[RMDB]
RNA sequence: GGGAACGACUCGAGUAGAGUCGAAAACUUUUUCAAUGAGCCAGGAAAAAGUGGUAAAACCUAGAUUGAUUCUGGCAGCAAUUCGACUCCAAAAUGCCAUAGCCUUAUCACUUGCAUUUUCCGAAAAAAUAAUGAUGACCUUCGGGUCAUCAUUAUUAAAAGAAACAACAACAACAAC
Reactivity to DMS in 0.01 (KOAc 150mM, MgCl2 10mM, bicine 150mM(pH8.5), 24C), signal-to-noise 1, nucleotides 027 to 126: c010u000u000u000u000u000c020a080a200u030g010a110g040c000c000a150g000g000a010a010a050a000a010g010u000g010g000u010a060a040a120a240c040c010u020a070g000a110u010u000g000a140u000u010c030u000g010g030c020a100g000c140a060a050u010u010c060g020a100c050u000c020c070a080a020a050a060u000g000c010c070a070u010a090g010c050c030u000u000a040u000c040a020c030u000u010g000c080a060u000u010u000u000c020c050g010a020a030a100a140
This 177-nucleotide RNA was probed chemically with DMS.
For DMS, 732 sequencing reads were counted.
Reactivities are given for positions 27 through 126.
The data come from the RNA Mapping Database (RMDB), library OK2TRN.
Conditions: 150 mM KOAc, 10 mM MgCl2 and 150 mM bicine (pH 8.5), 24 C.
For DMS the reverse transcriptase was MarathonRT.